[RMDB]
RNA sequence: GGGAACGACUCGAGUAGAGUCGAAAAGCCGAAAGGCACGUGGAGGUCUGCUAGCGUUGGUGUCCUACAAUACCCUCGCGUGACCUAUGUCUAGGGGUGAAAGGCCCAUCGAAUCCGGAAACAGCUGACUCAGACUCCUGUUCGCAGGAGUCUGAGUAAAAGAAACAACAACAACAAC
Reactivity to DMS in 0.01 (KOAc 150mM, MgCl2 10mM, bicine 150mM(pH8.5), 24C), signal-to-noise 2, nucleotides 027 to 126: g000c040c000g000a010a020a100g000g090c000a090c150g000u000g000g010a230g000g000u000c140u000g000c180u010a010g000c120g040u000u000g000g020u000g000u000c010c000u000a090c210a180a020u090a020c140c000c010u000c120g000c160g020u000g010a060c000c090u000a090u000g090u020c040u030a230g040g000g000g000u010g000a100a110a060g000g000c000c030c010a000u000c110g140a090a090u000c130c000g060g000a160a040a030c040a160g000c150u010g000
Reactivity to 2A3 in 0.01 (KOAc 150mM, MgCl2 10mM, bicine 150mM(pH8.5), 24C), signal-to-noise 1, nucleotides 027 to 126: g040c000c000g050a140a000a000g100g000c000a000c020g040u030g100g000a040g000g020u000c000u050g000c030u040a000g000c000g050u050u050g010g010u160g030u210c020c000u060a050c020a100a040u050a080c010c010c000u000c030g030c010g030u030g040a250c010c080u120a120u000g100u000c010u040a010g000g000g010g030u000g000a020a000a200g060g000c000c000c000a000u070c000g000a050a050u030c000c010g000g030a000a000a160c000a110g060c060u070g020
Structure probing data (DMS and 2A3) for a 177-nucleotide construct. The RNA was probed in 150 mM KOAc, 10 mM MgCl2 and 150 mM bicine (pH 8.5) at 24 C. For DMS the reverse transcriptase was MarathonRT.